Structure probing data (2A3) for a 207-nucleotide construct. The reactions ran in a buffer of 150 mM KOAc, 10 mM MgCl2 and 150 mM bicine (pH 8.5), at 24 C.
RNA sequence: GGGAACGACUCGAGUAGAGUCGAAAAGAGAACUGUCCAGUUUACCGAUUGCUGCGAUGGCCUUGUCCCAUGACUCUGCUGGUAUACGUGCUGUAAGUUGUGGAACCUGAAUGCGACCGGCCAUCUGUUCUACGGGGCUUAGCUGCCACGGGAACGGGUUGAACACCAUGUUCGCAUGGUGUUCAACAAAAGAAACAACAACAACAAC
Reactivity to 2A3 in 0.01 (KOAc 150mM, MgCl2 10mM, bicine 150mM(pH8.5), 24C), signal-to-noise 2, nucleotides 027 to 156: g100a000g010a010a070c020u060g000u130c010c000a040g000u040u090u080a220c000c040g100a170u120u230g000c070u060g000c050g050a030u040g010g030c010c000u010u140g050u000c040c010c000a050u030g040a010c040u080c100u060g040c010u000g000g100u100a130u080a180c130g050u070g000c030u040g080u300a110a090g000u020u000g060u070g080g070a000a060c040c020u140g020a190a070u180g140c100g080a080c020c030g050g000c000c000a030u020c000u010g000u000u000c040u100a230c040g000g000g010g000c000u040u040a060g020c120u110g000c060c000a000c000g030g000g000a020a020c050g000g000
Values cover nucleotides 27 to 156.
The 2A3 profile rests on 665 reads.
It was measured as part of the RMDB library OK3TST.